Structure probing data (DMS and 2A3) for a 177-nucleotide construct.
RNA sequence: GGGAACGACUCGAGUAGAGUCGAAAAGUAACCUGCAGAAUACAUUCCUAUAUCAAAGACACUAGAACAUGGAAUGAGCAUUCUAUGUAGGCAUCAGCUCAACCUUCCCAUGUUCAAUGAGUUGACACAGCCUAGUAAUGUUCGCAUUACUAGGCUGAAAAGAAACAACAACAACAAC
Reactivity to DMS in 0.01 (KOAc 150mM, MgCl2 10mM, bicine 150mM(pH8.5), 24C), signal-to-noise 3, nucleotides 027 to 126: g000u000a160a140c030c010u010g010c050a070g000a150a080u000a100c030a080u000u000c010c020u000a040u000a100u010c090a050a090a180g010a050c070a030c150u000a120g010a030a050c070a050u010g000g010a050a070u010g000a060g000c060a050u000u010c040u010a080u010g030u000a020g000g020c130a110u000c090a090g030c020u000c020a040a080c110c110u010u000c070c010c000a060u010g030u010u000c080a070a040u000g010a040g000u000u010g010a070c300a140
Reactivity to 2A3 in 0.01 (KOAc 150mM, MgCl2 10mM, bicine 150mM(pH8.5), 24C), signal-to-noise 3, nucleotides 027 to 126: g060u010a040a040c000c010u060g090c060a030g020a140a020u030a060c010a010u040u000c000c000u100a090u030a030u250c070a070a070a100g100a110c040a020c080u090a060g020a060a030c030a100u020g000g000a020a040u020g030a030g080c050a020u050u060c060u100a130u170g100u080a020g010g000c010a060u040c060a010g010c000u000c040a050a080c000c080u060u070c010c010c030a020u110g030u000u060c020a080a060u110g000a040g020u010u040g040a030c040a000

For 2A3 the reverse transcriptase was SuperScript II with manganese. Source: RMDB library OK2TST, as collected in RNAgym. The DMS profile rests on 1,932 reads. The RNA was probed in 150 mM KOAc, 10 mM MgCl2 and 150 mM bicine (pH 8.5) at 24 C.